[RMDB]
RNA sequence: GGGAACGACUCGAGUAGAGUCGAAAACACCUACAGUUGGUCAACUAAGUUGAAGCGUCCGCAUGUAGGAUCGCCACAAGGGAUUGUCUCAAUCCUUUGGGUUCAAAAGUAGAGACUCGGCUAAUCCAUCCUGACUGUCGGAUCGGUGCAGACUAAACCACUAUACAGCGUUCGCGCUGUAUAGUGGAAAAGAAACAACAACAACAAC
Reactivity to 2A3 in 0.01 (KOAc 150mM, MgCl2 10mM, bicine 150mM(pH8.5), 24C), signal-to-noise 2, nucleotides 027 to 156: c090a070c010c000u010a010c020a090g030u060u070g040g050u080c090a090a080c110u240a120a120g100u090u070g110a100a030g080c020g080u050c040c010g060c130a100u120g020u030a000g030g010a060u090c050g000c000c000a110c000a040a000g030g000g000a000u000u090g140u070c020u010c160a020a030u000c010c000u000u000u000g000g000g000u050u070c080a150a140a030a020g010u040a100g020a000g010a110c030u010c060g000g000c020u070a060a000u050c040c020a010u030c010c000u080g110a130c010u050g070u200c010g000g000a060u020c070g060g020u040g000c050a030g000a010c000u060a110a030a030